[RMDB]
RNA sequence: GGGAACGACUCGAGUAGAGUCGAAAAAGUCCGUACGCGGACAAGGUCGAUUAUGAGAACCUUAUAUUGUCCUGAAGAGAGGUGAUGACUUAAAAAUCAUGCCCAAUAGGAUUACGCUGAGGCCCAACCUGCGGAUCACUUUCGAGUGAUCCGCAGGAAAAGAAACAACAACAACAAC
Reactivity to 2A3 in 0.01 (KOAc 150mM, MgCl2 10mM, bicine 150mM(pH8.5), 24C), signal-to-noise 1, nucleotides 027 to 126: a000g010u000c000c000g030u070a000c130g000c000g000g000a000c000a000a000g000g020u030c060g020a210u180u020a030u300g120a090g000a000a110c000c000u020u000a170u070a040u140u040g000u000c000c000u050g030a090a050g160a020g080a090g000g030u100g150a180u060g000a020c010u170u250a070a120a000a000a000u070c070a000u070g000c020c030c030a070a110u200a120g000g000a000u000u110a080c120g000c000u070g040a000g050g030c010c010c010a000a000